The record gives the reactivity of an RNA of 177 nucleotides to 2A3 and DMS. The reactions ran in a buffer of 150 mM KOAc, 10 mM MgCl2 and 150 mM bicine (pH 8.5), at 24 C. For DMS the reverse transcriptase was MarathonRT. It was measured as part of the RMDB library M2PK50. The DMS profile rests on 14,896 reads.
RNA sequence: GGGAACGACUCGAGUAGAGUCGAAAAGUAAGAUGAUUCGUCAUCUUACGAACCCGAUGAAGCGGCACAUACCGAGCUUCAUACAUCUAAGAGUGCAAAUAAUGGCGCGUGGUUUCGACCACGCGAACGCCAUCAUAAUAUUCGUAUUAUGAUGGCGAAAAGAAACAACAACAACAAC
Reactivity to 2A3 in 0.01 (KOAc 150mM, MgCl2 10mM, bicine 150mM(pH8.5), 24C), signal-to-noise 9, nucleotides 027 to 126: g000u000a000a000g000a010u020g010a010u030u090c120g060u010c080a000u000c000u000u000a000c000g000a010a030c010c000c010g000a030u040g000a010a010g000c030g060g020c080a050c020a170u230a110c060c080g040a040g010c010u010u000c000a010u050a060c050a070u070c060u150a110a050g120a060g100u080g040c040a060a060a090u220a100a120u240g220g020c010g000c010g000u000g000g030u030u040u130c200g060a020c000c000a000c000g000c000g000a000a000
Reactivity to DMS in 0.01 (KOAc 150mM, MgCl2 10mM, bicine 150mM(pH8.5), 24C), signal-to-noise 8, nucleotides 027 to 126: g000u000a000a010g010a020u000g010a020u000u010c190g020u000c000a000u000c000u000u000a000c000g010a080a120c000c010c010g010a040u000g010a010a020g020c010g010g020c040a080c120a110u010a130c100c130g000a140g010c010u000u000c010a020u000a090c140a080u010c120u010a080a090g010a090g010u000g010c060a120a080a070u010a080a080u010g010g010c010g010c000g020u000g000g010u000u000u010c200g010a020c000c000a010c000g000c000g000a010a060